[RMDB]
RNA sequence: GGGAACGACUCGAGUAGAGUCGAAAACAGCGACUUCUUUAGGCGGAAAGACAUCAUGAAGUUCAUCAGCACGUCUGGAAAGGCCUCAAGUGCUGGAAGCCUAGGCAAUGUACUAUCAUAUGCCCAUAACCUUUAUUUAAGCAAAGAAAGCCUCCGAAUCCUACUGAGGUUUCGACCUCAGUAGGAUAAAAGAAACAACAACAACAAC
Reactivity to 2A3 in 0.01 (KOAc 150mM, MgCl2 10mM, bicine 150mM(pH8.5), 24C), signal-to-noise 3, nucleotides 027 to 156: c050a010g050c030g070a040c060u030u010c000u070u150u040a030g000g020c040g020g080a090a090a020g030a030c010a030u180c050a050u200g060a060a040g070u140u080c020a070u010c010a070g000c010a020c080g040u050c050u010g060g040a100a130a050g140g020c080c040u070c080a100a060g050u030g030c010u000g000g020a020a000g010c000c050u050a040g000g000c010a000a040u030g020u110a130c070u070a080u230c020a020u110a100u090g030c000c000c040a060u090a100a100c060c000u060u140u050a110u090u190u120a140a030g040c070a210a000a010g050a050a090a000g060c000c000u060c040c020g050a060
Reactivity to DMS in 0.01 (KOAc 150mM, MgCl2 10mM, bicine 150mM(pH8.5), 24C), signal-to-noise 1, nucleotides 027 to 156: c050a120g000c020g010a090c050u000u020c090u000u000u010a040g020g000c000g000g010a180a050a100g000a080c060a080u000c110a200u000g040a100a060g020u000u020c130a110u000c070a090g000c010a050c060g020u000c010u010g000g020a080a190a100g050g000c050c040u010c060a070a090g040u010g040c010u000g050g030a140a100g000c040c020u000a060g020g000c050a090a060u000g000u000a100c030u000a130u000c040a030u000a130u000g040c000c020c050a100u000a130a020c080c010u000u000u050a060u000u000u000a070a090g000c020a010a020a100g000a080a150a080g030c000c020u020c000c020g000a040
Chemical mapping of a 207-nucleotide RNA with 2A3 and DMS. For 2A3 the reverse transcriptase was SuperScript II with manganese. DMS (dimethyl sulfate) methylates the pairing face of unpaired adenines and cytosines. Source: RMDB library OK3TST, as collected in RNAgym. The reactions ran in a buffer of 150 mM KOAc, 10 mM MgCl2 and 150 mM bicine (pH 8.5), at 24 C.